[RMDB]
RNA sequence: GGGAACGACUCGAGUAGAGUCGAAAACAUUGUUCUGAUCAUCUGAAGAUCAGCUAUUAGAAGAGAAAGAUCAGUGAAGUCCUUUGGACCUGAUCAGCUUGAUACAAGAACUACUGAUUUCAACUUCAAAACGGGUGCUACUUCGGUAGCACCCGAACUAAGGGUGUUAGUUCGCUAACACCCUUAGAAAAGAAACAACAACAACAAC
Reactivity to 2A3 in 0.01 (KOAc 150mM, MgCl2 10mM, bicine 150mM(pH8.5), 24C), signal-to-noise 4, nucleotides 027 to 156: c040a050u100u170g040u210u120c010u010g020a000u010c000a020u030c080u180g070a120a040g000a050u010c000a000g030c020u090a130u250u170a070g030a050a020g040a010g060a050a060a030g020a020u010c010a000g020u040g170a150a010g010u030c010c000u090u160u300g040g010a040c000c030u040g030a060u050c010a000g050c030u080u080g020a040u060a170c060a020a040g010a100a030c040u070a020c020u090g020a040u000u050u080c050a080a080c030u060u010c020a010a060a070a040c020g030g000g000u000g020c000u000a010c000u030u090c230g070g000u000a000g000c000a000c000c000c000g000a000a000
Reactivity to DMS in 0.01 (KOAc 150mM, MgCl2 10mM, bicine 150mM(pH8.5), 24C), signal-to-noise 2, nucleotides 027 to 156: c040a160u010u010g020u010u000c010u010g000a030u000c010a140u000c110u000g020a200a250g010a010u000c000a040g030c170u000a100u020u020a210g010a030a040g010a070g010a210a120a050g000a010u000c000a040g010u000g010a120a090g010u000c000c020u000u000u000g040g010a020c020c020u010g010a140u010c090a150g020c060u000u000g010a070u010a060c060a050a030g010a050a030c000u000a110c010u000g010a030u010u000u000c020a090a290c000u000u000c020a060a040a110a170c030g030g010g030u000g000c000u000a000c010u010u020c290g000g020u000a010g000c000a010c000c000c000g010a000a010

Source: RMDB library M2RFPK, as collected in RNAgym. This 207-nucleotide RNA was probed chemically with 2A3 and DMS. For 2A3, 2,038 sequencing reads were counted. Values cover nucleotides 27 to 156. The RNA was probed in 150 mM KOAc, 10 mM MgCl2 and 150 mM bicine (pH 8.5) at 24 C.